The record gives the reactivity of an RNA of 207 nucleotides to DMS and 2A3. The reactions ran in a buffer of 150 mM KOAc, 10 mM MgCl2 and 150 mM bicine (pH 8.5), at 24 C. As a SHAPE reagent, 2A3 marks flexible, mostly unpaired nucleotides at the ribose 2'-OH. Source: RMDB library RSTRND, as collected in RNAgym.
[RMDB]
RNA sequence: GGGAACGACUCGAGUAGAGUCGAAAAUGUUGGCCGCACUUCUACUCUGAGUGAACGCGGCAACUGAUAAACGCAACCGACACGGAUGCAACGGUGACCGACGCCGAGAUCGAGGCCUUCUUUGCUGAAGAGGCUGCCGCUCUCGUCUGAAGGAACCCUAUAUUGAGCUGUUCGCAGCUCAAUAUAGAAAAGAAACAACAACAACAAC
Reactivity to DMS in 0.01 (KOAc 150mM, MgCl2 10mM, bicine 150mM(pH8.5), 24C), signal-to-noise 2, nucleotides 027 to 156: u000g020u000u010g030g000c020c020g010c030a090c080u000u010c010u010a010c040u010c110u000g010a130g030u000g000a070a090c140g010c030g000g020c010a010a060c060u000g000a140u000a030a140a110c190g010c030a080a090c030c010g020a130c090a280c080g010g000a170u030g040c040a050a050c020g020g010u000g020a160c010c020g040a300c220g010c070c000g020a080g010a070u000c080g040a300g020g000c000c000u010u000c020u000u000u000g020c190u000g010a060a050g010a040g000g000c030u000g000c000c000g000c070u000c000u000c010g010u000c030u000g010a090a090g020g000a300a060c080c020
Reactivity to 2A3 in 0.01 (KOAc 150mM, MgCl2 10mM, bicine 150mM(pH8.5), 24C), signal-to-noise 7, nucleotides 027 to 156: u120g010u010u020g190g080c000c000g010c020a050c050u080u050c020u120a130c060u070c130u250g130a110g090u080g040a080a030c110g000c010g000g000c000a000a010c010u010g040a040u100a100a120a010c100g000c010a010a040c010c010g150a150c120a060c300g040g000a020u040g000c030a070a050c030g010g010u020g090a250c010c000g010a010c020g010c010c000g000a000g000a000u020c010g010a020g020g000c020c010u220u170c030u060u120u130g210c210u250g050a020a000g000a020g050g000c030u070g210c220c010g000c000u000c000u010c000g010u000c010u030g050a030a030g020g000a000a000c000c000